This 177-nucleotide RNA was probed chemically with 2A3 and DMS. DMS adducts were read by reverse transcription with MarathonRT. The RNA was probed in 150 mM KOAc, 10 mM MgCl2 and 150 mM bicine (pH 8.5) at 24 C. DMS (dimethyl sulfate) methylates the pairing face of unpaired adenines and cytosines. Source: RMDB libraries RFM100 and RFMREP, as collected in RNAgym. The 2A3 profile rests on 1,320 reads.
[RMDB]
RNA sequence: GGGAACGACUCGAGUAGAGUCGAAAAUUUCGCCUGAAAACACACGUGUCCAUUCAACACUCCAGAGGAACCCGAGCGCUGGCCUUCCCUGGACUCCAGUGGUAACGCCUUGAGCUUGGAGGAGGGAUUUGGGAUCUAUUUUCGAAUAGAUCCCAAAAAAAGAAACAACAACAACAAC
Reactivity to 2A3 in 0.01 (KOAc 150mM, MgCl2 10mM, bicine 150mM(pH8.5), 24C), signal-to-noise 2, nucleotides 027 to 126: u070u040u060c080g020c000c030u050g090a020a000a050a010c090a010c000a010c050g050u090g030u000c040c020a070u150u080c020a040a000c020a050c030u060c020c010a010g010a050g150g100a080a040c000c000c000g010a030g020c030g000c020u010g030g000c000c020u010u000c000c000c010u030g010g070a160c030u070c030c030a050g000u120g090g050u130a030a000c040g020c030c000u020u020g060a020g030c040u040u010g020g010a070g020g020a020g010g020g020a050
Reactivity to DMS in 0.01 (KOAc 150mM, MgCl2 10mM, bicine 150mM(pH8.5), 24C), signal-to-noise 4, nucleotides 027 to 126: u020u010u010c050g010c000c020u000g000a130a070a080a080c070a050c070a070c050g020u010g010u010c020c060a130u020u010c110a090a070c070a070c050u000c020c020a090g000a090g020g010a130a080c070c020c000g010a050g020c040g000c030u000g010g000c030c070u000u020c010c010c030u010g000g020a110c090u010c030c020a020g010u060g000g000u020a050a040c280g000c020c010u020u010g000a100g020c020u020u000g000g010a080g000g000a060g000g000g010a110